[RMDB]
The record gives the reactivity of an RNA of 177 nucleotides to 2A3 and DMS.
RNA sequence: GGGAACGACUCGAGUAGAGUCGAAAAACGCCAGGUGUACGCACCUGGCGAGGGGGCACCGGGAGGAGGUGAGUGUCUCUUGUCGCCUCCUCCUCUCCCCCCUUACAGCAGCGUACGCGCUGCUGAAAUCGUUCAGGAGAUUCGUCUCCUGAACGAUAAAAGAAACAACAACAACAAC
Reactivity to 2A3 in 0.01 (KOAc 150mM, MgCl2 10mM, bicine 150mM(pH8.5), 24C), signal-to-noise 4, nucleotides 027 to 126: a000c020g000c000c000a010g020g000u000g010u030a070c280g010c080a010c000c000u010g000g000c000g000a000g000g010g010g000g000c110a060c080c060g000g000g000a000g000g000a000g020g000u020g010a060g050u180g080u030c050u030c050u190u190g130u010c010g010c010c000u010c000c000u000c000c000u000c000u000c000c000c000c000c000c000u010u150a060c010a010g010c010a000g000c000g010u030a030c180g010c010g010c090u000g000c000u010g000a030a000
Reactivity to DMS in 0.01 (KOAc 150mM, MgCl2 10mM, bicine 150mM(pH8.5), 24C), signal-to-noise 2, nucleotides 027 to 126: a140c030g040c000c000a010g000g040u000g020u000a070c130g030c000a030c000c000u030g000g000c010g000a010g010g000g010g010g010c300a090c180c300g020g010g020a040g010g000a020g000g020u000g000a040g000u030g000u010c070u030c130u020u010g020u000c010g010c000c000u000c010c010u000c000c000u000c060u000c160c000c000c000c010c020u000u050a110c000a000g010c000a000g010c000g060u020a180c180g030c030g010c010u000g010c010u000g000a030a100
The RNA was probed in 150 mM KOAc, 10 mM MgCl2 and 150 mM bicine (pH 8.5) at 24 C.
Reactivities are given for positions 27 through 126.
For DMS the reverse transcriptase was MarathonRT.
2A3 adducts were read by reverse transcription with SuperScript II with manganese.